[RMDB]
The record gives the reactivity of an RNA of 177 nucleotides to 2A3 and DMS. DMS adducts were read by reverse transcription with MarathonRT. For DMS, 1,276 sequencing reads were counted. The RNA was probed in 150 mM KOAc, 10 mM MgCl2 and 150 mM bicine (pH 8.5) at 24 C. For 2A3, 1,513 sequencing reads were counted. As a SHAPE reagent, 2A3 marks flexible, mostly unpaired nucleotides at the ribose 2'-OH.

RNA sequence: GGGAACGACUCGAGUAGAGUCGAAAAAGACCAUUGUGGCCGCGUUUGAUUCGAACCUCAAUAAGUGGAUCGACUCAGUCCCAGAGCACCGUGCGUCCUUAUCUUAUGCGAUCCUGUCCACUUAGUCGUAGCUCUCACAAUUCGUUGUGAGAGCUACAAAAGAAACAACAACAACAAC
Reactivity to 2A3 in 0.01 (KOAc 150mM, MgCl2 10mM, bicine 150mM(pH8.5), 24C), signal-to-noise 2, nucleotides 027 to 126: a030g020a010c000c010a020u020u120g080u060g050g060c040c020g030c070g050u000u100u130g060a080u010u030c040g030a030a020c020c020u070c020a120a160u200a290a000g050u060g050g010a010u030c020g020a060c020u010c020a030g040u050c000c010c010a030g050a000g030c010a000c070c000g050u060g000c010g040u040c000c010u060u130a080u110c030u020u070a090u190g030c000g070a080u040c010c040u020g020u000c030c000a040c070u090u110a050g040u090c080
Reactivity to DMS in 0.01 (KOAc 150mM, MgCl2 10mM, bicine 150mM(pH8.5), 24C), signal-to-noise 2, nucleotides 027 to 126: a120g000a160c010c010a170u010u000g000u000g010g020c040c030g020c090g030u000u010u010g010a070u000u000c050g000a070a180c070c020u010c050a130a070u010a060a080g020u000g000g000a080u000c040g000a060c040u000c030a080g000u000c020c000c000a110g010a130g000c070a050c070c030g020u010g010c060g000u000c020c020u000u010a050u000c070u000u000a100u000g020c090g000a070u000c030c030u000g000u010c060c000a050c110u000u000a140g020u000c060